RNA sequence: GGGAACGACUCGAGUAGAGUCGAAAAGGGCUGAUGGCCGUGCAGAUGGUGCUCGACGUGUUCAUUCCGUCGGUGUCGGGCAAGGCGGCCGUGAGCAUGCCGAUCAUCGGGCCGAUCGCGCAGCUAAGUACCUCCAUUAUUUCGAUAAUGGAGGUACAAAAGAAACAACAACAACAAC
Reactivity to DMS in 0.01 (KOAc 150mM, MgCl2 10mM, bicine 150mM(pH8.5), 24C), signal-to-noise 8, nucleotides 027 to 126: g000g010g020c010u000g000a070u000g010g010c010c020g030u010g020c100a100g010a200u010g010g010u000g010c040u010c020g010a010c010g010u010g010u000u010c250a170u010u010c040c030g010u000c020g010g020u000g000u000c020g000g000g010c220a100a090g000g010c010g000g010c040c060g020u000g000a030g010c020a060u000g000c020c000g000a040u000c020a060u000c060g010g000g010c050c070g000a030u000c030g010c130g010c040a070g010c070u010a060a160
Reactivity to 2A3 in 0.01 (KOAc 150mM, MgCl2 10mM, bicine 150mM(pH8.5), 24C), signal-to-noise 7, nucleotides 027 to 126: g060g020g010c020u100g080a040u040g020g000c010c020g000u060g130c050a040g030a240u140g070g070u050g010c030u060c070g000a010c010g110u150g090u160u120c070a080u250u090c020c020g010u020c020g040g040u050g010u020c010g030g010g020c050a050a070g080g020c000g000g000c000c010g010u010g010a010g000c030a010u050g010c010c010g000a020u010c010a030u070c000g030g050g020c030c040g020a010u020c010g000c010g000c060a010g010c010u030a150a000
An RNA of 177 nucleotides, treated with DMS and 2A3 and read out base by base. The reactions ran in a buffer of 150 mM KOAc, 10 mM MgCl2 and 150 mM bicine (pH 8.5), at 24 C. DMS (dimethyl sulfate) methylates the pairing face of unpaired adenines and cytosines. Values cover nucleotides 27 to 126. For DMS, 18,647 sequencing reads were counted. It was measured as part of the RMDB library OK2TST.